[RMDB]
RNA sequence: GGGAACGACUCGAGUAGAGUCGAAAACGCUGCACUCUUCGGAGUGCAGCGAAAACAACACCUAAACCUUGUCAGGACCGGAAGGUAGCAGCAACACGGGAUGCUUGUAGUAGGCGUUGACUCCGGGUCAAAAGGUAGCCCAGUUCGCUGGGCUACCGGUAGAAUACUGGUUCGCCAGUAUUCUACCAAAAGAAACAACAACAACAAC
Reactivity to DMS in 0.01 (KOAc 150mM, MgCl2 10mM, bicine 150mM(pH8.5), 24C), signal-to-noise 1, nucleotides 027 to 156: c020g000c010u000g060c000a040c000u000c000u000u020c300g040g020a080g060u010g000c010a000g000c010g020a010a050a060a110c030a040a070c060a030c010c020u000a130a100a120c030c030u000u010g010u000c020a130g030g010a120c000c020g020g050a130a120g000g010u000a080g010c020a200g040c010a050a060c030a090c010g000g010g000a210u020g000c030u010u010g010u010a070g030u000a120g020g010c020g020u000u030g010a100c060u010c010c050g000g010g050u000c060a030a020a130a090g060g020u010a020g000c020c000c010a010g020u000u010c280g020c070u040g030g020g030c010u000a010c000c000
Reactivity to 2A3 in 0.01 (KOAc 150mM, MgCl2 10mM, bicine 150mM(pH8.5), 24C), signal-to-noise 1, nucleotides 027 to 156: c000g030c010u010g010c000a010c000u060c030u040u140c300g130g010a010g020u000g020c010a010g000c000g000a000a000a000a020c010a010a000c000a030c000c010u100a110a060a050c010c040u100u120g080u170c040a050g100g050a060c000c020g040g080a090a080g080g020u070a040g070c040a010g000c000a030a030c010a040c070g040g000g000a040u030g040c030u010u080g040u030a090g030u040a040g050g000c040g040u040u140g020a040c000u020c040c050g000g010g010u010c010a010a040a020a110g000g000u000a000g000c000c000c000a000g010u040u090c220g040c110u000g040g000g000c000u000a000c000c020

An RNA of 207 nucleotides, treated with DMS and 2A3 and read out base by base. Conditions: 150 mM KOAc, 10 mM MgCl2 and 150 mM bicine (pH 8.5), 24 C. Values are in units of 0.01, from 0 to 300, in steps of 10. DMS adducts were read by reverse transcription with MarathonRT.